[RMDB]
RNA sequence: GGGAACGACUCGAGUAGAGUCGAAAAUGUUCCUGGAGAGGUUACUGAAUCUGGAGCUGCUUUUAGGGAGUUGCAGAUGGCGCAGGCCUCCCUUCCUCCUCAAGGAAGCCAAAGACACCAUCACAAUCCCUUUACUUCGAUUCGUCGAAGUAAAGGGAAAAGAAACAACAACAACAAC
Reactivity to DMS in 0.01 (KOAc 150mM, MgCl2 10mM, bicine 150mM(pH8.5), 24C), signal-to-noise 1, nucleotides 027 to 126: u000g000u020u000c000c000u000g040g010a100g000a040g000g020u000u070a150c070u000g010a090a000u030c020u020g000g000a080g010c030u000g020c000u000u000u040u040a220g040g060g030a040g020u000u000g000c000a030g000a080u010g050g050c170g000c050a120g040g000c000c010u000c000c020c060u000u030c000c000u000c070c020u000c240a140a190g030g000a020a050g000c100c070a090a050a120g010a050c230a100c100c040a050u000c080a190c070a020a150u050
Reactivity to 2A3 in 0.01 (KOAc 150mM, MgCl2 10mM, bicine 150mM(pH8.5), 24C), signal-to-noise 4, nucleotides 027 to 126: u170g000u000u000c000c010u000g000g000a130g000a010g060g000u080u180a070c010u070g020a060a030u020c000u010g010g060a000g000c000u210g030c050u120u100u100u250a160g030g040g040a020g000u010u030g130c010a000g000a010u040g080g000c090g000c030a000g000g030c000c000u000c010c000c000u020u000c000c000u020c000c010u110c040a060a020g060g000a050a020g050c030c030a060a040a030g090a060c000a060c040c040a060u120c020a010c020a070a080u040